Chemical mapping of a 177-nucleotide RNA with DMS and 2A3. Conditions: 150 mM KOAc, 10 mM MgCl2 and 150 mM bicine (pH 8.5), 24 C.

RNA sequence: GGGAACGACUCGAGUAGAGUCGAAAAGUAGUGAGGCAACGUCGUCUACGACGUUCCACUAUGAAGCGGUCGGCAGGCUUUGGAAGUACGUGGACGAUGUAGAGUCUGCACGACAUGAACAGGCAUGCCGGCAUGGUUCGUUCGCGAACUAUGCCGGAAAAGAAACAACAACAACAAC
Reactivity to DMS in 0.01 (KOAc 150mM, MgCl2 10mM, bicine 150mM(pH8.5), 24C), signal-to-noise 3, nucleotides 027 to 126: g020u000a020g000u000g010a110g000g000c130a040a020c000g010u000c010g000u000c150u030a050c000g030a010c000g030u010u000c010c000a070c040u010a020u000g000a120a130g000c040g000g000u010c000g000g000c030a050g010g020c020u000u030u020g010g010a080a140g000u010a080c070g000u000g020g000a090c020g010a080u020g030u010a080g000a100g000u020c000u000g000c000a030c000g010a040c010a030u040g000a110a080c080a060g000g000c060a040u020g000
Reactivity to 2A3 in 0.01 (KOAc 150mM, MgCl2 10mM, bicine 150mM(pH8.5), 24C), signal-to-noise 4, nucleotides 027 to 126: g020u040a000g000u000g060a130g040g120c140a050a000c000g000u010c000g020u010c080u130a070c090g010a000c000g050u000u010c000c000a000c000u020a020u100g040a030a000g040c040g060g010u040c000g030g000c000a020g000g000c010u060u080u100g030g050a030a020g080u070a050c030g070u080g070g050a020c030g050a050u110g030u110a010g000a000g010u000c000u010g050c060a090c020g000a000c000a040u060g010a040a030c010a000g070g040c030a000u070g040

Reactivities are given for positions 27 through 126.